[RMDB]
RNA sequence: GGGAACGACUCGAGUAGAGUCGAAAAACGCAUUCACUUCCGCAGGCAACAGCAUUUUCCGCUCAAAUACCAAAGCCAACACAAACAGAAAAAUUGCCCAUAGAAUAUUCAGUACAAGCAUGUUAAUUUAUGCAUUAUGUUUCGACAUAAUGCAUAAAAAAGAAACAACAACAACAAC
Reactivity to 2A3 in 0.01 (KOAc 150mM, MgCl2 10mM, bicine 150mM(pH8.5), 24C), signal-to-noise 6, nucleotides 027 to 126: a000c030g000c020a040u030u050c040a020c040u060u030c010c020g010c040a020g070g000c030a040a030c010a080g050c030a030u040u030u090u020c000c020g040c010u040c050a070a130a040u130a040c020c020a060a050a020g020c010c010a070a000c020a020c040a060a160a000c040a020g170a050a090a020a010a010u080u080g050c010c000c000a030u090a040g090a070a030u090a090u140u190c040a010g020u050a040c020a070a060g030c050a070u050g030u050u100a100a080u070
Reactivity to DMS in 0.01 (KOAc 150mM, MgCl2 10mM, bicine 150mM(pH8.5), 24C), signal-to-noise 5, nucleotides 027 to 126: a090c090g000c060a050u010u000c060a040c030u000u000c060c050g000c050a050g020g010c020a070a040c130a060g020c060a060u010u010u010u000c050c040g040c040u010c050a030a060a050u020a090c060c020a060a120a110g010c020c030a020a060c080a040c070a040a070a060c080a090g000a040a050a070a090a070u020u010g010c030c030c010a060u040a080g000a080a060u010a070u020u010c020a060g010u010a050c080a050a090g000c090a050u010g000u000u010a060a080u030